Source: RMDB library OK3TST, as collected in RNAgym. An RNA of 207 nucleotides, treated with DMS and 2A3 and read out base by base. High DMS reactivity at an A or C suggests that its Watson-Crick edge is free. For 2A3, 2,321 sequencing reads were counted. The reactions ran in a buffer of 150 mM KOAc, 10 mM MgCl2 and 150 mM bicine (pH 8.5), at 24 C. For DMS, 1,880 sequencing reads were counted.

[RMDB]
RNA sequence: GGGAACGACUCGAGUAGAGUCGAAAAUGUCGGUAUCACCGACACGGAACUUCCAAGGCAGGGGGUUCAUCAGUGGUUCAAGAAAAUCAUCGAGCUUACCCCACUCUGACGAGACAACUUCAUCCAGUUUGUCGAUUAUCCGUUGCUGGAUAUCAGAGAGCUAUUCAAGAUUCGUCUUGAAUAGCUCAAAAGAAACAACAACAACAAC
Reactivity to DMS in 0.01 (KOAc 150mM, MgCl2 10mM, bicine 150mM(pH8.5), 24C), signal-to-noise 1, nucleotides 027 to 156: u000g010u000c020g020g020u000a200u010c110a070c000c000g020a010c000a010c000g010g020a100a100c090u010u030c020c020a110a110g000g000c070a110g090g060g050g020g000u000u010c040a050u000c040a040g070u010g000g050u000u020c030a130a250g010a140a080a050a050u010c010a040u000c010g010a020g010c060u000u000a080c000c000c020c010a130c040u000c030u000g000a120c060g010a240g000a080c000a040a040c050u010u020c110a050u020c160c100a050g050u010u000u010g020u000c000g000a200u000u000a110u010c030c040g000u000u000g030c020u010g000g010a080u000a220u000c020a010g010a300
Reactivity to 2A3 in 0.01 (KOAc 150mM, MgCl2 10mM, bicine 150mM(pH8.5), 24C), signal-to-noise 4, nucleotides 027 to 156: u090g010u020c020g010g040u080a130u220c100a060c070c000g010a000c010a000c030g100g000a040a050c010u040u030c030c020a030a060g130g000c060a050g040g030g000g000g010u050u010c030a080u060c020a030g040u040g050g050u090u070c070a120a050g120a140a140a060a060u070c050a060u100c090g010a010g040c040u080u080a100c000c020c020c000a040c000u030c020u030g060a080c070g050a010g020a080c030a050a040c070u150u130c070a110u040c090c010a010g030u070u130u100g090u120c000g030a030u080u100a040u060c020c020g060u060u110g050c070u150g020g010a030u010a060u080c010a010g060a010